[RMDB]
RNA sequence: GGGAACGACUCGAGUAGAGUCGAAAAGACCCUCGAGCGUGUCCACGGGAUCACGCUCGAGACUGGUGAUACCGACGCCGCAGUCGCUACCGCGUUUCGGUGUGCCAGCGUGGUGGCGGCCGUCGGCCGGCGGUACGUGAUUCGUCACGUACCGCCGAAAAGAAACAACAACAACAAC
Reactivity to DMS in 0.01 (KOAc 150mM, MgCl2 10mM, bicine 150mM(pH8.5), 24C), signal-to-noise 3, nucleotides 027 to 126: g000a090c020c020c000u010c000g040a010g020c010g030u000g010u000c010c010a210c270g010g010g010a040u010c020a000c000g000c000u000c010g010a020g010a030c220u000g000g000u000g010a120u000a130c030c000g000a090c200g000c020c020g030c040a050g000u000c010g000c010u000a000c000c020g010c010g000u000u000u010c190g010g000u000g020u010g020c010c020a040g010c010g000u010g000g040u000g010g010c000g020g010c000c000g000u020c010g010g010c020
Reactivity to 2A3 in 0.01 (KOAc 150mM, MgCl2 10mM, bicine 150mM(pH8.5), 24C), signal-to-noise 3, nucleotides 027 to 126: g040a000c010c000c000u000c000g000a010g010c020g000u000g010u020c000c020a100c160g170g070g020a080u150c070a010c000g010c020u030c020g000a010g010a010c080u120g000g010u020g040a050u080a140c020c030g010a050c100g000c010c000g020c020a010g020u020c000g000c020u000a000c000c010g000c000g000u080u160u220c110g010g050u220g120u210g240c020c010a000g000c010g000u010g020g000u000g020g000c000g000g000c000c000g010u180c010g010g030c020